[RMDB]
RNA sequence: GGGAACGACUCGAGUAGAGUCGAAAAAUUUGCCACCAAGGUUGGGGGAGCCUUUAGAAGUAAUGUGGACCUCUGCUGAGAAUGCACUCAGUCUGCAGAUGCCAACGCUUAAACAUAUCAAGAAAUCCAUUUCUGUUCAGUUCGCUGAACAGAAAUGAAAAGAAACAACAACAACAAC
Reactivity to DMS in 0.01 (KOAc 150mM, MgCl2 10mM, bicine 150mM(pH8.5), 24C), signal-to-noise 2, nucleotides 027 to 126: a080u020u000u010g020c020c030a240c150c050a060a070g010g000u000u040g020g000g010g020g030a110g000c010c030u010u000u010a070g020a060a050g000u000a020a140u000g030u020g020g010a070c040c040u000c080u000g020c030u000g000a090g000a180a130u000g000c070a070c060u000c070a050g000u000c100u000g030c080a050g000a060u000g000c050c010a040a070c090g020c050u000u010a020a030a100c080a070u000a040u000c070a100a110g010a090a070a120u000c090
Reactivity to 2A3 in 0.01 (KOAc 150mM, MgCl2 10mM, bicine 150mM(pH8.5), 24C), signal-to-noise 1, nucleotides 027 to 126: a050u060u080u170g070c010c030a050c070c000a060a010g000g020u030u060g080g000g000g040g030a000g010c000c000u120u100u100a130g010a180a000g040u150a090a120u240g000u060g030g000a010c020c000u030c060u000g000c000u000g030a000g020a170a060u130g050c030a050c000u040c000a010g090u100c000u060g000c030a040g010a080u070g000c020c000a110a020c070g050c090u050u100a060a030a050c030a070u110a030u220c040a080a050g090a080a090a000u070c010

Overview
This 177-nucleotide RNA was probed chemically with DMS and 2A3. DMS adducts were read by reverse transcription with MarathonRT. High 2A3 reactivity points to a flexible backbone, as in loops and unpaired stretches. The DMS profile rests on 1,343 reads. Conditions: 150 mM KOAc, 10 mM MgCl2 and 150 mM bicine (pH 8.5), 24 C.